[RMDB]
RNA sequence: GGGAACGACUCGAGUAGAGUCGAAAAGCGUACUACAGCGGGAAAGUGGAGCGAAGAACUAUAUGAAAGCAAUCCCAAAUAGGAUUGCUAUGUAGUAUAGGGAGCUCCAUAACACGCUGUAUCGCAAAAGAAAGCUGCAUCUUCGGAUGCAGCUUUCCUAUAUAGGGAUGUUCGCAUCCCUAUAUAGAAAAGAAACAACAACAACAAC
Reactivity to DMS in 0.01 (KOAc 150mM, MgCl2 10mM, bicine 150mM(pH8.5), 24C), signal-to-noise 2, nucleotides 027 to 156: g030c000g030u000a030c080u000a020c010a020g030c000g000g010g010a030a140a180g060u000g010g010a050g050c000g020a090a150g000a160a220c010u010a020u000a020u010g010a210a130a050g000c000a000a010u000c000c000c030a030a100a240u000a040g010g010a020u010u000g010c000u000a010u000g000u000a230g010u000a000u000a010g010g000g010a300g010c000u010c010c020a010u000a020a300c020a060c020g000c020u010g000u000a000u000c020g000c010a150a050a100a110g010a050a060a050g040c000u000g020c020a040u000c000u020u000c300g000g050a070u010g000c000a010g000c000u000u000u000c000
Reactivity to 2A3 in 0.01 (KOAc 150mM, MgCl2 10mM, bicine 150mM(pH8.5), 24C), signal-to-noise 2, nucleotides 027 to 156: g000c020g010u040a000c040u010a000c020a030g000c020g050g010g070a130a200a030g030u020g000g000a000g000c000g100a300a000g010a020a030c000u000a010u000a010u030g050a090a020a010g010c010a000a020u030c030c040c090a160a230a170u300a060g000g010a000u010u000g030c020u000a010u100g000u010a010g000u000a000u000a000g000g000g020a020g000c000u000c010c000a000u020a000a010c010a000c000g000c000u010g000u000a000u110c000g000c020a040a040a000a110g000a000a000a000g030c020u020g000c040a000u000c010u120u200c300g050g000a010u020g000c010a000g000c000u000u000u000c000